[RMDB]
RNA sequence: GGGAACGACUCGAGUAGAGUCGAAAAGAAGAGACCGCCACCAGGAGUCAGGGUUCAGACACGAUCCAAGAGAACACGGUAACACUGACUGUGUAGCGGAAGAGGCAAAGAGAGUGGCGGAAGAGAAACUAUACGGUGCAUUCGUGCACCGUAUAGUAAAAGAAACAACAACAACAAC
Reactivity to DMS in 0.01 (KOAc 150mM, MgCl2 10mM, bicine 150mM(pH8.5), 24C), signal-to-noise 4, nucleotides 027 to 126: g000a150a090g000a130g000a190c020c010g050c000c020a020c010c030a300g000g000a060g000u000c040a010g010g000g000u030u010c140a120g040a070c120a060c020g000a150u000c010c050a110a130g000a170g020a050a070c060a040c010g000g000u020a020a030c010a020c040u000g000a010c000u000g000u030g000u000a060g000c050g020g020a110a040g000a100g000g000c030a110a170a110g000a100g000a070g010u000g000g000c000g000g010a060a060g000a130g000a090a150
Reactivity to 2A3 in 0.01 (KOAc 150mM, MgCl2 10mM, bicine 150mM(pH8.5), 24C), signal-to-noise 5, nucleotides 027 to 126: g160a030a010g060a000g040a030c000c000g030c000c000a010c010c010a060g090g040a030g070u010c010a010g020g010g020u030u040c060a020g030a150c030a020c170g010a030u040c020c020a140a030g110a030g020a100a020c090a010c090g030g000u020a020a000c030a020c020u000g040a000c000u020g030u040g050u240a050g000c020g050g030a010a020g090a030g030g010c040a030a110a000g130a030g010a020g010u000g000g000c000g030g010a030a000g040a000g010a000a100